Structure probing data (2A3) for a 207-nucleotide construct. The data come from the RNA Mapping Database (RMDB), library OK3TST. 2A3 adducts were read by reverse transcription with SuperScript II with manganese.
RNA sequence: GGGAACGACUCGAGUAGAGUCGAAAAGUCAGAGCAGGAGGAAUAGAGGGGUUUGGGGGGAGGUGCCACACACUUUUAAACCACCAGAUCUCAUGAGAACUUACUUGCUAUCACAAGAACAGCACCAAGGGGACAGUGCUAAGCCAUUCAUGAGAAACUCAUCACGGAUAUUCGUAUCCGUGAUGAGAAAAGAAACAACAACAACAAC
Reactivity to 2A3 in 0.01 (KOAc 150mM, MgCl2 10mM, bicine 150mM(pH8.5), 24C), signal-to-noise 1, nucleotides 027 to 156: g050u090c050a000g030a030g080c030a050g050g010a040g030g060a060a020u070a110g030a110g020g030g000g070u050u040u080g020g000g020g000g000g080a050g030g010u040g030c030c000a030c000a000c020a010c070u060u090u030u080a080a070a020c010c020a000c010c010a060g020a080u020c040u000c000a000u010g000a010g070a090a060c070u050u050a050c010u100u010g000c050u210a100u280c050a020c000a060a010g040a110a050c030a050g030c010a010c020c000a050a060g080g000g000g000a030c020a020g050u030g030c010u000a010a010g040c030c000a000u020u070c000a030u110g000a000g010a160a000a000